The record gives the reactivity of an RNA of 207 nucleotides to 2A3. Source: RMDB library M2RFPK, as collected in RNAgym. The reactions ran in a buffer of 150 mM KOAc, 10 mM MgCl2 and 150 mM bicine (pH 8.5), at 24 C. 2A3 is a SHAPE reagent: it acylates the 2'-hydroxyl of flexible nucleotides of all four kinds.
RNA sequence: GGGAACGACUCGAGUAGAGUCGAAAAUUGCGCCUCCGAUUCGCCGUCGGCAUUUCCCCAGCAGCCAUGACCUACCAGGCUGCGGUGCGGCUCGCCGCACAGGUCAUCCCUCAUCGGCCGCGUCCUGGAUAGGGCUAUACUUUCGAGUAUAGCCCAACCGAUUCAAAUGAUUCGUCAUUUGAAUCGGAAAAGAAACAACAACAACAAC
Reactivity to 2A3 in 0.01 (KOAc 150mM, MgCl2 10mM, bicine 150mM(pH8.5), 24C), signal-to-noise 1, nucleotides 027 to 156: u100u080g040c060g020c030c020u000c050c020g010a120u050u140c020g010c000c060g040u060c020g010g010c060a080u030u050u050c030c000c020c010a010g020c000a000g000c000c030a180u130g020a070c030c000u090a230c010c030a010g000g000c000u010g010c000g000g000u000g000c000g000g020c070u120c100g120c000c010g020c000a000c000a040g000g040u020c020a060u070c020c000c000u070c020a090u060c010g040g000c040c010g050c020g040u030c000c040u060g000g050a100u110a200g010g000g000c000u000a000u020a000c000u000u140u060c200g040a000g000u000a000u000a000g000c020c000c000a000a000